[RMDB]
RNA sequence: GGGAACGACUCGAGUAGAGUCGAAAAAGACUCGCCCCAGCUCGCCACGCUAGCUGACGAGGUGUCUGCCUCCCUGGCCAAGCAGGGUUUGUGAUCAGGCCCCUGGGGCGGUCAAUAAUUGUGGAGAAACACACACUUUAUUCGUAAAGUGUGUGUUAAAAGAAACAACAACAACAAC
Reactivity to 2A3 in 0.01 (KOAc 150mM, MgCl2 10mM, bicine 150mM(pH8.5), 24C), signal-to-noise 3, nucleotides 027 to 126: a000g040a020c040u050c130g000c000c000c010c000a000g010c020u020c020g010c030c000a040c040g100c120u240a130g020c090u050g010a010c010g000a010g000g030u160g010u040c020u030g020c010c000u000c000c010c000u020g080g000c110c080a090a030g030c000a040g040g010g050u040u280u080g030u080g040a110u200c010a010g010g010c000c000c000c000u000g000g000g000g000c020g000g000u020c000a000a010u220a080a060u180u170g030u070g060g090a060g130a090
Reactivity to DMS in 0.01 (KOAc 150mM, MgCl2 10mM, bicine 150mM(pH8.5), 24C), signal-to-noise 6, nucleotides 027 to 126: a110g000a020c010u010c040g020c000c000c010c010a020g000c020u000c020g020c010c010a030c080g010c230u010a100g020c160u000g010a030c030g000a010g000g010u010g010u000c040u010g000c040c010u000c010c010c010u000g000g010c080c170a070a090g010c010a020g010g000g010u000u010u010g010u010g020a090u010c030a010g000g010c000c060c110c010u000g000g000g000g020c000g000g000u000c010a080a080u010a060a110u010u000g010u000g010g010a210g010a160